Structure probing data (2A3 and DMS) for a 177-nucleotide construct.
The reactions ran in a buffer of 150 mM KOAc, 10 mM MgCl2 and 150 mM bicine (pH 8.5), at 24 C.
For 2A3 the reverse transcriptase was SuperScript II with manganese.
Values cover nucleotides 27 to 126.
[RMDB]
RNA sequence: GGGAACGACUCGAGUAGAGUCGAAAACGGGCCAACGCGCUUGAUGAUCUGGUCACGCCGCUGGCCCACAAGGCCACCGAUAUGCGCACUAGAGGAAACCAACGGCUCAGGCCGGGCGGGUCCCGCGAUAAACAGCAUGAUUCGUCAUGCUGUUUAUAAAAGAAACAACAACAACAAC
Reactivity to 2A3 in 0.01 (KOAc 150mM, MgCl2 10mM, bicine 150mM(pH8.5), 24C), signal-to-noise 9, nucleotides 027 to 126: c050g000g000g000c000c000a020a010c020g070c020g010c030u020u010g010a020u020g040a100u130c110u280g110g010u010c000a010c020g000c010c000g000c010u010g010g000c000c000c000a010c000a000a000g050g010c000c010a020c020c010g020a050u040a040u210g070c050g000c020a030c050u060a040g020a040g100g070a070a020a030c020c010a030a040c020g010g000c010u020c050a050g120g030c000c010g000g010g000c050g030g030g050u020c010c010c000g020c010g010
Reactivity to DMS in 0.01 (KOAc 150mM, MgCl2 10mM, bicine 150mM(pH8.5), 24C), signal-to-noise 9, nucleotides 027 to 126: c180g000g010g010c000c000a020a020c030g010c210g010c020u000u000g000a030u010g010a140u030c160u030g020g010u000c010a020c080g010c010c020g010c050u000g010g000c000c010c020a010c100a040a120g010g000c010c020a120c050c030g000a110u010a050u030g000c040g000c080a080c070u000a060g010a150g000g010a080a070a130c060c030a110a170c030g010g000c020u010c120a110g010g010c020c010g010g000g010c050g000g000g010u000c010c000c000g020c120g000